[RMDB]
RNA sequence: GGGAACGACUCGAGUAGAGUCGAAAAAUAGUCAUUAAACAAACAUCAAAUCGCAUAGCAAAGAGUCAAAAAAAUAGAGAGCUUUGCGAGACCUACCAAGGGUGAAGAGAUACCAUCCAAGGAGCUGCAUCGGCAUGGAAUUCGUUCCAUGCCGAUGAAAAGAAACAACAACAACAAC
Reactivity to DMS in 0.01 (KOAc 150mM, MgCl2 10mM, bicine 150mM(pH8.5), 24C), signal-to-noise 1, nucleotides 027 to 126: a120u000a100g000u010c020a060u080u090a100a080a120c230a130a100a060c250a030u000c160a000a080a040u000c060g000c040a000u000a070g000c000a090a040a110g000a100g000u030c000a010a000a000a130a000a150a130u000a120g000a170g010a070g000c010u020u000u000g060c000g000a060g000a040c090c000u000a010c010c100a090a260g000g000g000u000g010a010a000g000a010g080a080u100a090c060c000a010u000c000c010a020a300g000g000a010g190c070u000g000
Reactivity to 2A3 in 0.01 (KOAc 150mM, MgCl2 10mM, bicine 150mM(pH8.5), 24C), signal-to-noise 2, nucleotides 027 to 126: a000u270a000g040u120c110a050u130u300a050a100a050c110a070a080a020c040a060u160c010a070a130a070u020c000g020c000a000u040a020g000c030a130a000a110g080a060g140u180c230a160a000a190a200a000a000a050u250a030g080a000g020a050g000c030u140u070u020g000c000g000a000g020a070c010c000u070a150c020c080a030a000g070g020g000u000g000a000a000g080a010g020a030u070a200c020c020a000u000c000c020a030a010g000g000a000g020c020u020g060
About this RNA: This 177-nucleotide RNA was probed chemically with DMS and 2A3. For DMS, 930 sequencing reads were counted.